[RMDB]
RNA sequence: GGGAACGACUCGAGUAGAGUCGAAAAGGGAAGUGGUGUGGGGAGCAGCCCCUCCGAAGACCCCACGUGCCCGGGUGCUGCACAGCCCUCGCCUGUGCCCGCCCAGAGUGGCAGUUAGCACCGUGGCCUUUCUGAUAAAAUUCGUUUUAUCAGAAAGAAAAGAAACAACAACAACAAC
Reactivity to 2A3 in 0.01 (KOAc 150mM, MgCl2 10mM, bicine 150mM(pH8.5), 24C), signal-to-noise 5, nucleotides 027 to 126: g050g000g020a100a080g080u090g080g040u070g030u070g050g030g010g020a060g040c020a030g000c020c010c010c010u020c020c020g020a070a040g060a070c000c010c020c000a010c050g030u060g010c020c020c030g060g000g020u040g010c020u020g000c010a010c010a020g010c030c020c020u040c060g040c020c000u020g020u020g010c020c020c030g010c000c020c010a110g050a030g120u300g020g000c010a010g020u070u120a010g000c010a010c010c030g020u090g020g000c000
Reactivity to DMS in 0.01 (KOAc 150mM, MgCl2 10mM, bicine 150mM(pH8.5), 24C), signal-to-noise 9, nucleotides 027 to 126: g000g010g010a110a090g020u000g010g010u010g020u000g010g010g010g010a160g010c100a130g000c040c010c010c020u010c030c030g000a110a120g000a180c030c020c000c020a040c060g010u010g010c020c010c110g010g010g020u000g010c030u000g010c030a020c030a050g000c050c080c070u010c110g000c110c020u000g010u000g000c020c190c070g000c010c010c020a170g000a100g020u000g020g010c010a070g010u000u010a040g010c020a050c020c030g000u010g020g000c070